[RMDB]
RNA sequence: GGGAACGACUCGAGUAGAGUCGAAAAGAAAAUAAGCGUCGAGUGAAGUGCUGUGAAGCAUACGAAGUGUGCGGACACUCAGCGUUUUAGUGGAUGAGACGCGAAACACUAAGAAGCGAAAGCGAAAGGCUAUGAUUUACUUCGGUAAAUCAUAGCCAAAAGAAACAACAACAACAAC
Reactivity to 2A3 in 0.01 (KOAc 150mM, MgCl2 10mM, bicine 150mM(pH8.5), 24C), signal-to-noise 4, nucleotides 027 to 126: g020a000a100a000a010u250a120a020g010c020g020u000c030g020a040g060u020g070a090a020g000u030g020c020u020g010u120g090a070a000g020c000a000u020a050c040g250a240a090g010u000g000u010g060c030g050g040a050c060a000c090u080c010a050g000c000g000u020u000u020u090a180g010u050g110g070a130u130g080a070g010a030c010g000c000g010a040a060a000c040a020c090u150a190a050g020a060a020g080c050g040a080a070a020g080c070g060a110a030a000
Reactivity to DMS in 0.01 (KOAc 150mM, MgCl2 10mM, bicine 150mM(pH8.5), 24C), signal-to-noise 3, nucleotides 027 to 126: g000a070a090a070a110u000a040a210g000c010g030u000c010g000a130g010u040g020a110a060g010u010g000c010u000g000u020g000a190a220g010c020a000u000a020c010g000a120a070g000u030g020u000g010c000g050g000a190c240a160c090u040c030a040g020c030g020u010u010u000u010a040g010u000g010g000a080u010g020a300g010a020c000g000c000g000a060a080a080c140a040c090u030a060a070g000a100a150g000c040g010a090a120a110g000c000g000a050a060a130